An RNA of 177 nucleotides, treated with DMS and 2A3 and read out base by base.
2A3 adducts were read by reverse transcription with SuperScript II with manganese.
Source: RMDB library OK2TRN, as collected in RNAgym.
Values are in units of 0.01, from 0 to 300, in steps of 10.
For DMS, 22,493 sequencing reads were counted.
The reactions ran in a buffer of 150 mM KOAc, 10 mM MgCl2 and 150 mM bicine (pH 8.5), at 24 C.

[RMDB]
RNA sequence: GGGAACGACUCGAGUAGAGUCGAAAACAGCGACUGACUGAACGUAUUGGGCAGCGUUAUAUCAUUAUUUUGCGGCGGUGCAUUCAGCCACCAGCUCAUCAUUUGUUGCAGCAACCGUGCGUUGGUAAGCCUAAUUAAAUUUCGAUUUAAUUAGGCUAAAAGAAACAACAACAACAAC
Reactivity to DMS in 0.01 (KOAc 150mM, MgCl2 10mM, bicine 150mM(pH8.5), 24C), signal-to-noise 9, nucleotides 027 to 126: c080a080g010c050g010a110c170u000g000a070c040u000g000a050a050c080g020u010a060u000u000g010g010g010c020a110g010c030g010u000u000a060u010a060u010c140a110u010u010a080u010u000u000u000g020c070g010g010c020g010g020u000g000c040a110u000u000c100a070g000c070c020a030c040c020a150g010c020u000c040a040u010c090a090u000u000u000g000u000u000g010c060a080g010c030a050a070c070c060g010u000g010c080g010u000u000g010g010u010a090
Reactivity to 2A3 in 0.01 (KOAc 150mM, MgCl2 10mM, bicine 150mM(pH8.5), 24C), signal-to-noise 7, nucleotides 027 to 126: c020a010g050c020g080a090c070u060g030a030c000u030g040a040a030c030g030u070a100u060u140g020g080g000c040a030g010c020g040u060u060a110u030a010u140c060a040u030u230a070u040u120u060u080g030c030g030g000c020g020g030u000g010c040a050u040u160c030a020g050c040c010a020c010c010a040g000c010u010c010a060u030c010a020u040u060u210g050u030u070g040c040a050g020c000a030a040c020c020g080u060g040c050g020u040u020g020g010u030a060